The data come from the RNA Mapping Database (RMDB), library TTRDES. Structure probing data (DMS and 2A3) for a 177-nucleotide construct. Values are in units of 0.01, from 0 to 300, in steps of 10. Conditions: 150 mM KOAc, 10 mM MgCl2 and 150 mM bicine (pH 8.5), 24 C.
RNA sequence: GGGAACGACUCGAGUAGAGUCGAAAAGAUAUGGAUUCAGGACGACGAUAAGCUGAGUAUCGGAAACGAUACUAGCUUUUGACGUCGCCUGAAUCCUAAGUCAAACCGCCGCCUUCGGGCGGCGGAACACUACGUAUGUCUUCGGACAUACGUAGUGAAAAGAAACAACAACAACAAC
Reactivity to DMS in 0.01 (KOAc 150mM, MgCl2 10mM, bicine 150mM(pH8.5), 24C), signal-to-noise 1, nucleotides 027 to 126: g000a030u000a150u020g000g000a030u000u000c000a010g040g000a130c000g000a010c000g020a130u020a020a020g010c000u040g010a010g010u000a000u000c000g010g000a050a000a080c010g000a000u000a000c000u010a030g000c010u000u000u010u000g010a160c120g030u000c000g030c010c000u010g000a010a000u000c000c000u000a000a030g000u000c000a100a190a210c030c010g090c040c010g100c000c000u000u010c240g040g040g170c020g020g070c070g030g020a000a040
Reactivity to 2A3 in 0.01 (KOAc 150mM, MgCl2 10mM, bicine 150mM(pH8.5), 24C), signal-to-noise 2, nucleotides 027 to 126: g020a010u030a030u080g000g000a020u020u000c000a000g150g100a160c020g000a010c040g090a240u070a300a010g000c000u100g300a010g040u000a000u000c000g000g000a010a010a000c000g010a000u010a000c000u000a000g000c000u040u010u030u190g270a190c040g000u000c000g020c010c000u000g000a000a010u000c000c000u000a000a000g000u010c000a050a090a100c030c010g010c050c020g110c000c040u100u170c300g250g000g000c000g050g000c010g010g020a020a010